The record gives the reactivity of an RNA of 207 nucleotides to DMS and 2A3.
Conditions: 150 mM KOAc, 10 mM MgCl2 and 150 mM bicine (pH 8.5), 24 C.
2A3 is a SHAPE reagent: it acylates the 2'-hydroxyl of flexible nucleotides of all four kinds.
The 2A3 profile rests on 1,681 reads.
The data come from the RNA Mapping Database (RMDB), library M2RFPK.
High DMS reactivity at an A or C suggests that its Watson-Crick edge is free.
RNA sequence: GGGAACGACUCGAGUAGAGUCGAAAAGAUGUUCGCUGAUUCGUCAGCCGCAUGCCCAGGUGGCCGCGAUCUUCAAGGCUACGGCGCGGAUAGGUCCGCUCUGAUCGUUUUCCUCCAACGACGCUAUAAAAGGAACGAAGGUUCGCCUUCGUUCCAAUCGAAAUCUACUGUUCGCAGUAGAUUUCGAAAAAGAAACAACAACAACAAC
Reactivity to DMS in 0.01 (KOAc 150mM, MgCl2 10mM, bicine 150mM(pH8.5), 24C), signal-to-noise 1, nucleotides 027 to 156: g000a120u010g000u000u000c080g030c040u010g020a040u000u010c200g040u000c000a110g020c000c050g020c000a040u010g020c030c000c000a180g030g010u020g000g010c000c070g000c100g000a060u000c050u000u000c100a090a300g010g000c010u000a020c040g010g020c030g020c040g020g040a120u000a140g020g000u020c020c000g010c050u010c040u010g010a070u000c060g020u000u000u000u010c030c020u000c010c020a080a110c000g010a080c060g000c050u010a130u010a030a040a130a240g000g000a020a020c000g010a040a000g010g030u000u010c300g060c000c000u000u000c010g020u000u000c000c080a020a020
Reactivity to 2A3 in 0.01 (KOAc 150mM, MgCl2 10mM, bicine 150mM(pH8.5), 24C), signal-to-noise 2, nucleotides 027 to 156: g040a020u050g000u100u130c080g010c020u000g010a030u020u070c200g020u000c120a000g010c010c030g030c000a030u080g010c000c000c000a040g010g020u040g010g010c000c030g090c030g020a010u010c030u060u050c040a030a000g000g010c000u000a000c020g010g000c030g000c000g030g000a040u130a230g110g200u020c000c020g020c020u000c030u040g030a030u010c010g020u060u070u100u040c030c080u040c050c020a040a100c060g090a040c030g000c100u080a030u100a250a110a060a050g000g000a000a000c000g000a000a000g060g010u020u080c230g020c020c010u000u000c000g020u000u000c000c000a000a000